[RMDB]
RNA sequence: GGGAACGACUCGAGUAGAGUCGAAAAAGUAUCAACUACGCUUUCGCUUAGAACAUACUAAAGCUACACGAAUUGAAUCGCCAUAGUUUGGUUCGUGUCACAGUUUAUGGCUCGGGGUUAACUGGUUCAACUUAAUCCUUAAAUUAUGAACUUAUCGGAGUCUAAGAUUGUUCGCAAUCUUAGACUCAAAAGAAACAACAACAACAAC
Reactivity to 2A3 in 0.01 (KOAc 150mM, MgCl2 10mM, bicine 150mM(pH8.5), 24C), signal-to-noise 5, nucleotides 027 to 156: a000g080u080a090u150c070a090a080c030u070a020c050g030c030u070u140u230c120g000c010u040u030a030g070a140a030c040a100u120a040c020u080a090a070a060g050c040u030a020c000a000c000g000a000a020u030u010g000a020a010u040c090g000c030c000a010u020a030g000u000u010u010g010g000u000u000c000g020u000g040u050c040a040c010a150g140u160u090u030a010u010g010g000c000u000c010g010g000g000g000u000u010a030a010c010u090g110g010u020u020c010a020a000c010u010u020a000a010u020c010c000u000u020a030a010a010u140u130a170u260g020a010a000c020u070u070a130u220c090g060
Reactivity to DMS in 0.01 (KOAc 150mM, MgCl2 10mM, bicine 150mM(pH8.5), 24C), signal-to-noise 1, nucleotides 027 to 156: a090g000u010a030u000c080a060a210c050u000a040c040g000c040u000u020u000c080g060c040u010u020a070g000a060a270c110a070u010a080c000u010a040a090a160g020c040u000a060c000a020c030g020a020a000u010u010g030a050a030u000c090g060c030c190a070u010a020g040u000u000u000g000g020u010u010c020g000u000g000u010c080a060c130a110g000u010u010u000a040u000g000g020c030u000c070g000g010g040g020u000u010a010a030c060u000g000g000u010u010c060a100a150c240u010u000a020a030u010c010c010u000u030a070a050a160u020u010a050u000g010a040a070c000u000u000a060u010c080g000